[RMDB]
RNA sequence: GGGAACGACUCGAGUAGAGUCGAAAAGUUGGUCCUAAGGCUACAUUGGCUGCUGUCUUUAUUGGUCCAUUUAUUGUAGCAUGUAUGCUAGGCAUUGGCCUAGUUUAUUUAUUGCAAUUGCAAGUUCACGCCCUUAUAUGUUCGCAUAUAAGGGCGUAAAAGAAACAACAACAACAAC
Reactivity to DMS in 0.01 (KOAc 150mM, MgCl2 10mM, bicine 150mM(pH8.5), 24C), signal-to-noise 5, nucleotides 027 to 126: g010u000u010g010g000u000c010c030u000a080a090g010g010c020u000a040c060a070u010u010g000g010c100u000g010c040u000g010u000c050u010u010u010a110u020u000g010g010u010c010c020a070u020u010u010a070u000u000g020u000a050g020c040a040u000g010u000a010u000g000c000u000a000g000g020c000a300u020u010g030g020c000c010u000a000g000u000u000u000a010u000u000u010a060u010u010g010c010a170a070u000u000g010c110a040a080g010u010u000c110
Reactivity to 2A3 in 0.01 (KOAc 150mM, MgCl2 10mM, bicine 150mM(pH8.5), 24C), signal-to-noise 2, nucleotides 027 to 126: g040u000u070g000g040u000c010c000u040a020a090g030g000c010u020a000c050a060u070u080g160g000c040u040g000c040u040g050u060c020u060u150u080a190u080u140g050g000u030c010c000a050u080u140u120a140u150u120g030u020a030g000c050a010u060g040u010a000u020g000c010u000a010g010g000c020a180u120u300g300g000c000c010u000a000g000u000u030u000a020u010u050u000a060u020u020g010c010a070a190u160u120g040c050a060a060g000u120u130c020